[RMDB]
RNA sequence: GGGAACGACUCGAGUAGAGUCGAAAAAUGCAGCAACAAAGAGCAGAAGAUAAUGAAGCUAAAUGGAAAAGAGAAAUAUAUGGUCGAGGUCUUCCAGAAAGAGGAAUUCUGCCUGGAGUUCGUCCAGGCAGCAUAGGUGGUUCGCCACCUAUGCUGCAAAAGAAACAACAACAACAAC
Reactivity to DMS in 0.01 (KOAc 150mM, MgCl2 10mM, bicine 150mM(pH8.5), 24C), signal-to-noise 8, nucleotides 027 to 126: a070u010g010c030a040g020c050a060a070c090a080a080a090g000a080g020c030a050g000a100a060g010a080u010a070a060u010g000a110a090g010c040u000a040a070a090u010g010g000a050a040a070a060g010a120g010a070a070a080u010a090u010a080u010g010g020u000c020g010a040g010g010u010c050u010u010c020c010a050g010a050a250a050g010a040g000g010a120a110u010u000c020u000g010c300c000u000g010g010a040g010u010u000c050g000u000c000c010a030g000
Reactivity to 2A3 in 0.01 (KOAc 150mM, MgCl2 10mM, bicine 150mM(pH8.5), 24C), signal-to-noise 6, nucleotides 027 to 126: a000u080g000c010a010g020c010a030a070c020a060a160a030g060a030g010c030a010g020a090a010g010a080u130a150a090u200g030a070a000g000c030u060a070a060a130u150g070g020a040a060a070a030g100a030g070a030a090a020u210a010u040a050u090g010g000u020c010g010a000g020g040u050c020u140u040c040c000a000g040a030a050a000g050a010g050g250a180a150u210u000c010u020g010c010c000u010g000g000a010g000u060u040c000g000u000c010c000a020g070